[RMDB]
RNA sequence: GGGAACGACUCGAGUAGAGUCGAAAAAGUCGGCGUUCCUCAAAGCCCCGGAAACCGAGAAAGAAGAGGAAAGAGAGAGUGAGACCAGUUUCACGAGUGCCGAAAGCUCUUCUGAGGGAGAUGGAUCCACAGUAAGACUGUUCGCAGUCUUACUGUGAAAAGAAACAACAACAACAAC
Reactivity to DMS in 0.01 (KOAc 150mM, MgCl2 10mM, bicine 150mM(pH8.5), 24C), signal-to-noise 6, nucleotides 027 to 126: a090g010u000c030g010g010c040g010u000u000c010c000u010c130a100a100a160g000c080c010c010c040g010g000a070a070a090c060c010g000a110g000a100a110a060g010a060a020g010a030g030g010a060a090a090g000a120g010a070g000a220g010u000g000a070g010a090c060c130a140g020u000u010u000c020a040c080g010a130g020u010g020c040c030g000a080a070a110g000c020u000c010u010u000c030u000g010a150g000g000g010a060g010a150u000g000g000a150u000c080
Reactivity to 2A3 in 0.01 (KOAc 150mM, MgCl2 10mM, bicine 150mM(pH8.5), 24C), signal-to-noise 2, nucleotides 027 to 126: a020g060u050c030g000g030c040g040u040u000c020c000u020c020a090a150a050g060c080c010c000c000g030g040a060a060a020c040c000g030a030g100a140a130a010g020a020a000g010a010g060g060a020a180a010g100a000g000a000g000a010g030u040g000a030g010a040c010c050a130g020u060u020u040c030a010c020g030a020g070u120g050c010c000g030a060a030a020g030c010u000c000u040u000c030u050g010a080g020g020g000a060g000a010u070g020g030a040u050c040